[RMDB]
RNA sequence: GGGAACGACUCGAGUAGAGUCGAAAAGUACAGGUAACUUACGAUGUCGGAAACACUUUACCGUGGCCCUAAGCAAUGGAGAUGACACUUCAGGGAGGCUUCACUCUGCAGAGAACUCUCCCCCGUCGCGUGGCGGGCUGGAUUACGAUCGCGGAGGCUUAUAGUGAAUCUUCGGAUUCACUAUAAGAAAAGAAACAACAACAACAAC
Reactivity to DMS in 0.01 (KOAc 150mM, MgCl2 10mM, bicine 150mM(pH8.5), 24C), signal-to-noise 2, nucleotides 027 to 156: g040u010a040c070a080g010g020u000a060a070c070u010u000a070c070g010a080u010g000u000c020g000g000a140a100a060c030a060c050u000u000u000a040c050c040g020u010g000g010c000c000c020u010a050a110g020c070a060a120u010g020g010a070g010a100u000g010a170c050a090c000u000u010c040a100g010g030g020a040g000g010c060u010u000c030a070c020u010c020u000g010c060a160g000a040g020a040a070c050u000c090u000c000c010c000c010c000g000u000c020g030c200g020u010g010g030c050g000g000g020c000u010g020g000a070u000u000a040c080g000a140u000c030g040c000g000g000a050g010g010
Reactivity to 2A3 in 0.01 (KOAc 150mM, MgCl2 10mM, bicine 150mM(pH8.5), 24C), signal-to-noise 4, nucleotides 027 to 156: g060u070a020c040a040g030g060u070a120a060c030u090u170a050c090g070a090u120g070u100c080g050g040a020a090a010c070a020c050u080u100u080a060c040c030g010u030g040g010c030c030c000u050a100a030g010c050a070a110u130g030g010a030g010a040u070g010a020c020a010c070u030u080c000a010g010g000g030a040g060g050c000u090u090c000a030c020u040c020u040g000c060a010g050a000g020a070a040c020u020c000u000c040c000c000c000c000g030u050c020g030c100g110u130g030g020c010g040g000g000c020u060g000g020a020u070u070a030c030g010a030u040c030g000c020g010g020a010g020g000

About this RNA
An RNA of 207 nucleotides, treated with DMS and 2A3 and read out base by base. The DMS profile rests on 4,715 reads. The data come from the RNA Mapping Database (RMDB), library ARCHII. 2A3 adducts were read by reverse transcription with SuperScript II with manganese.